[RMDB]
The data come from the RNA Mapping Database (RMDB), libraries RFM100 and RFMREP.
The record gives the reactivity of an RNA of 177 nucleotides to 2A3 and DMS.
For DMS the reverse transcriptase was MarathonRT.
RNA sequence: GGGAACGACUCGAGUAGAGUCGAAAAAGCCGGAGGUACGCCUCCGGCAAUUUGAGUCCACGAUGCACCUUGUAACGGUAAUUCAAGGUACACCGUGAACUCAAAUACGGAGGAUACGUCCUCCGAACUAGAUCUCUGUUUUCGAACAGAGAUCUAGAAAAGAAACAACAACAACAAC
Reactivity to 2A3 in 0.01 (KOAc 150mM, MgCl2 10mM, bicine 150mM(pH8.5), 24C), signal-to-noise 7, nucleotides 027 to 126: a000g000c000c000g000g010a010g010g010u050a030c260g060c010c000u000c000c000g010g000c000a000a000u000u000u000g000a000g000u000c000c000a000c000g000a000u010g010c010a010c010c000u030u000g050u130a140a070c160g120g100u130a150a170u090u030c010a000a000g010g000u000a010c000a000c010c000g000u000g000a000a000c000u000c000a010a000a000u090a010c010g000g000a000g010g000a020u020a060c190g090u030c000c000u000c000c000g000a030a010
Reactivity to DMS in 0.01 (KOAc 150mM, MgCl2 10mM, bicine 150mM(pH8.5), 24C), signal-to-noise 3, nucleotides 027 to 126: a120g010c010c000g010g000a030g000g030u010a090c200g010c010c010u000c000c000g010g000c000a000a000u000u000u000g010a020g010u010c030c010a020c010g000a050u000g000c060a010c000c000u000u010g010u020a050a090c220g010g010u080a110a220u020u000c000a020a000g010g030u000a060c020a010c020c000g010u000g010a020a010c000u000c000a000a000a010u000a140c020g000g000a030g000g000a040u010a120c230g020u000c000c000u000c000c000g000a050a110